[RMDB]
RNA sequence: GGGAACGACUCGAGUAGAGUCGAAAAAGAGCAGCAAGGCAAUCGGCGCCCUGCUGGACGCCUGGUUCCAACCCUUCUGCGUCAUGCUCAGCCAGCCCACCACCGCGCAUGAUGUGGGCGGUUGGGGCUUAAGGCCUGCAUUCGUGCAGGCCUUAAGAAAAGAAACAACAACAACAAC
Reactivity to 2A3 in 0.01 (KOAc 150mM, MgCl2 10mM, bicine 150mM(pH8.5), 24C), signal-to-noise 2, nucleotides 027 to 126: a000g080a010g020c020a010g020c050a010a070g060g010c040a020a080u110c090g050g020c040g030c010c010c000u120g130c090u050g050g040a000c020g030c000c030u110g010g050u100u050c060c040a070a060c050c010c000u080u050c010u040g020c000g050u050c040a060u140g040c000u000c010a010g000c000c010a040g000c000c000c000a030c000c010a020c000c070g070c000g020c120a050u080g030a060u180g100u010g020g010g010c000g000g000u000u010g000g000g000g000
Reactivity to DMS in 0.01 (KOAc 150mM, MgCl2 10mM, bicine 150mM(pH8.5), 24C), signal-to-noise 5, nucleotides 027 to 126: a060g000a200g010c000a030g000c170a020a020g000g030c130a070a080u010c110g020g010c060g010c000c010c000u000g010c190u000g010g010a020c040g010c010c050u020g030g010u000u010c090c070a070a070c210c010c020u010u010c020u010g010c000g000u000c050a100u010g010c000u000c020a050g000c010c040a150g030c000c000c010a060c040c060a070c050c050g020c130g010c070a100u000g010a100u020g020u000g000g020g010c230g000g010u000u000g010g000g000g000
This 177-nucleotide RNA was probed chemically with 2A3 and DMS. DMS adducts were read by reverse transcription with MarathonRT. The reactions ran in a buffer of 150 mM KOAc, 10 mM MgCl2 and 150 mM bicine (pH 8.5), at 24 C. It was measured as part of the RMDB library OK2TRN.